Overview:
Chemical mapping of a 207-nucleotide RNA with 2A3. 2A3 is a SHAPE reagent: it acylates the 2'-hydroxyl of flexible nucleotides of all four kinds.
RNA sequence: GGGAACGACUCGAGUAGAGUCGAAAAUGUGGGCUCCAUCGACGCCGCUUUAAGGUCCCCAAUCGUGGCGUGUCGGCCUGCUUCGGCAGGCACUGGCGCCGGGACCUUGAAGAGAUGAGAUUUCGAUCUCAUCUUUGGGUGUCUCUGGUGCUUGAGGGAUCUUAACAACCUUCGGGUUGUUAAGAUCAAAAGAAACAACAACAACAAC
Reactivity to 2A3 in 0.01 (KOAc 150mM, MgCl2 10mM, bicine 150mM(pH8.5), 24C), signal-to-noise 2, nucleotides 027 to 156: u270g020u120g000g010g000c010u010c010c000a000u020c040g000a010c010g000c000c010g020c030u010u010u000a020a000g000g000u010c000c000c010c020a060a250u250c160g170u120g020g030c020g000u020g110u160c050g010g000c000c010u000g000c010u020u020c100g090g010c030a020g010g020c030a020c030u080g050g000c000g000c000c000g000g000g000a000c000c000u000u000g010a000a000g020a000g010a000u010g000a000g000a000u050u070u220c240g090a050u000c000u000c000a000u000c000u020u090u040g110g000g000u010g010u000c000u000c000u020g020g000u000g010c030u020u010g030a090g030g140

It was measured as part of the RMDB library PDB130. Conditions: 150 mM KOAc, 10 mM MgCl2 and 150 mM bicine (pH 8.5), 24 C.